An RNA of 207 nucleotides, treated with 2A3 and read out base by base.
The 2A3 profile rests on 668 reads.
The RNA was probed in 150 mM KOAc, 10 mM MgCl2 and 150 mM bicine (pH 8.5) at 24 C.
The data come from the RNA Mapping Database (RMDB), library RSTRND.
Values cover nucleotides 27 to 156.
RNA sequence: GGGAACGACUCGAGUAGAGUCGAAAACGCAUGCCGAGGACUCCUGGCUCCUCGUAAAUCAUCCGGGAAACAACACAACUGCCAACAACGAAAUGGCACUUGCUGCCUGAUCUAAAAGUCAGGUGAGCUAGCGUCUACCGGUACCAGUGCCUGUCCUGAAUGCACGAUACUUCGGUAUCGUGCAUUCAAAAGAAACAACAACAACAAC
Reactivity to 2A3 in 0.01 (KOAc 150mM, MgCl2 10mM, bicine 150mM(pH8.5), 24C), signal-to-noise 1, nucleotides 027 to 156: c050g010c030a050u160g080c010c000g000a000g030g000a020c030u040c050c020u010g040g000c050u130c040c050u060c000g110u140a020a050a000u050c030a020u160c020c000g060g000g000a040a060a000c010a040a060c030a030c050a200a210c040u030g000c030c010a090a090c010a030a130c170g110a000a040a130u090g000g000c010a010c000u000u020g000c000u000g020c000c000u000g000a000u030c020u160a160a000a000a000g010u000c000a000g000g000u020g130a020g010c000u000a000g010c000g020u000c000u070a100c040c050g000g000u040a060c050c050a010g010u010g030c000c020u030g000u080c000c000u000